Source information:
The record gives the reactivity of an RNA of 177 nucleotides to 2A3 and DMS.
[RMDB]
RNA sequence: GGGAACGACUCGAGUAGAGUCGAAAACGCAGCGACAGCUUGUGACCGAUGGUGUUGGCGGUGAAACCCGGGGUGUCGGUGGGCACGAUGAAUCCGCGGAUUCCGUCGUCGGUGGCGGCCCACACGAAUGCUAGUACAGUUUCGACUGUACUAGCAUAAAAGAAACAACAACAACAAC
Reactivity to 2A3 in 0.01 (KOAc 150mM, MgCl2 10mM, bicine 150mM(pH8.5), 24C), signal-to-noise 4, nucleotides 027 to 126: c060g000c050a020g020c010g090a060c050a040g040c050u150u160g080u120g100a060c000c040g050a100u100g010g100u050g020u120u080g030g000c030g000g010u070g040a070a060a050c020c000c010g000g020g000g000u110g020u040c000g000g060u050g040g050g010c060a030c160g030a050u070g080a030a060u030c000c000g000c090g070g000a070u180u050c040c030g030u050c010g020u020c020g050g020u030g040g000c010g000g000c000c000c000a030c010a000c050g030a050
Reactivity to DMS in 0.01 (KOAc 150mM, MgCl2 10mM, bicine 150mM(pH8.5), 24C), signal-to-noise 4, nucleotides 027 to 126: c070g000c040a050g000c040g010a070c150a080g000c020u000u030g010u020g000a100c030c030g000a060u020g000g010u010g000u000u010g000g020c050g000g030u000g000a040a080a140c110c010c000g000g010g020g020u010g020u000c020g000g020u000g010g000g020c020a050c040g020a070u010g000a060a060u010c010c000g030c150g010g000a090u000u010c050c070g010u000c030g020u020c050g010g020u010g010g000c040g000g010c000c000c000a030c050a080c070g000a060
The RNA was probed in 150 mM KOAc, 10 mM MgCl2 and 150 mM bicine (pH 8.5) at 24 C. For DMS the reverse transcriptase was MarathonRT. For 2A3, 5,436 sequencing reads were counted. The data come from the RNA Mapping Database (RMDB), library OK1LIB. Values cover nucleotides 27 to 126.